[RMDB]
RNA sequence: GGGAACGACUCGAGUAGAGUCGAAAAUUGAUUGGCGCACGCGGGUUAAAGACCCCAAUGCGAUGCAGCGCAUCACCGCGCAACAAGUGAUUGCGAUGUUUGAGCGUGCCGCUGCUGACAUCAUGGAUCACGAUUUACCUUUCGAGGUAAAUCGUGAAAAAGAAACAACAACAACAAC
Reactivity to DMS in 0.01 (KOAc 150mM, MgCl2 10mM, bicine 150mM(pH8.5), 24C), signal-to-noise 3, nucleotides 027 to 126: u000u000g010a070u010u010g010g000c030g030c010a020c120g010c200g000g000g020u030u000a100a110a160g000a190c020c000c010c110a110a050u000g020c030g000a080u000g000c010a020g020c020g010c030a050u000c030a040c120c040g000c060g010c060a030a000c120a220a110g030u000g000a060u000u000g010c010g020a070u000g010u000u000u000g000a140g000c090g020u000g030c100c030g020c010u000g000c020u010g010a190c140a010u000c030a030u000g010g000a200
Reactivity to 2A3 in 0.01 (KOAc 150mM, MgCl2 10mM, bicine 150mM(pH8.5), 24C), signal-to-noise 2, nucleotides 027 to 126: u070u040g030a010u010u180g020g080c000g030c020a010c020g040c050g000g000g040u000u030a160a070a040g170a070c000c000c000c030a000a120u090g010c020g000a010u110g000c010a010g000c000g000c010a010u050c010a000c000c050g040c020g030c030a030a020c070a120a090g130u070g140a170u010u120g020c030g060a050u050g090u030u050u240g070a040g000c100g010u030g020c070c060g020c030u040g030c030u070g060a030c020a090u050c020a020u120g070g020a040